[RMDB]
RNA sequence: GGGAACGACUCGAGUAGAGUCGAAAAGGGGUCUUCUAGGACGGAGGUGGAGACAUGACCUGAAGCCUCCACGGGUCAACAGCUCCACUCCCCACCCGUCCUGAAGACGGAGGCACCCAAAUCACAGCAGGCGUUCUUCGGAACGCCUGCUGUGAAACCAAUAUUUAUCGUUCGCGAUAAAUAUUGGAAAAGAAACAACAACAACAAC
Reactivity to 2A3 in 0.01 (KOAc 150mM, MgCl2 10mM, bicine 150mM(pH8.5), 24C), signal-to-noise 1, nucleotides 027 to 156: g100g020g030g020u010c020u010u020c090u150a020g030g000a000c010g000g020a040g000g050u050g010g010a020g020a050c160a170u240g010a020c050c020u030g030a100a040g020c000c030u060c030c030a020c040g010g000g000u010c040a050a010c040a210g100c010u000c000c020a000c050u050c030c010c000c040a040c020c000c000g000u000c000c000u000g000a000a000g000a000c040g020g000a010g000g000c000a030c010c000c000a060a100a010u070c010a010c000a000g000c000a020g080g000c000g010u000u030c040u080u110c260g110g000a020a000c000g090c010c010u000g010c010u010g000u000g040a000a000a000